[RMDB]
RNA sequence: GGGAACGACUCGAGUAGAGUCGAAAACUCUGACGCUUCGGCGUCAGAGAAACCUCUAAGCAGAUUGGCGAGGACGAGGCUGCGGAGCGCGUUUGCCAACAAAAACGCAUAGAUUCGUCUAUGCGAAGAGCUGAUAAGUAUUCGUACUUAUCAGCUCAAAAGAAACAACAACAACAAC
Reactivity to 2A3 in 0.01 (KOAc 150mM, MgCl2 10mM, bicine 150mM(pH8.5), 24C), signal-to-noise 5, nucleotides 027 to 126: c000u000c000u000g010a010c000g020c010u040u050c210g140g000c010g000u000c010a010g010a010g000a010a000a000c020c000u030c070u110a100a120g040c070a060g080a300u090u080g050g020c030g030a080g090g010a050c020g010a040g170g000c020u090g050c110g130g100a050g000c060g000c020g000u010u040u080g060c020c010a010a010c020a020a120a020a010a010c000g000c010a000u000a000g010a010u020u040c100g040u000c090u010a000u010g000c000g030a080a020
Reactivity to DMS in 0.01 (KOAc 150mM, MgCl2 10mM, bicine 150mM(pH8.5), 24C), signal-to-noise 5, nucleotides 027 to 126: c000u000c010u000g010a010c010g030c000u000u010c210g030g030c000g020u000c010a010g020a000g010a030a060a150c050c010u000c150u010a090a110g020c160a080g000a160u000u010g010g000c030g020a090g010g000a080c020g000a060g010g010c020u000g010c170g020g000a050g010c030g000c020g020u000u000u010g010c020c020a030a040c110a060a050a060a060a140c020g010c000a000u000a000g010a020u000u020c190g000u000c000u000a010u000g010c000g000a040a080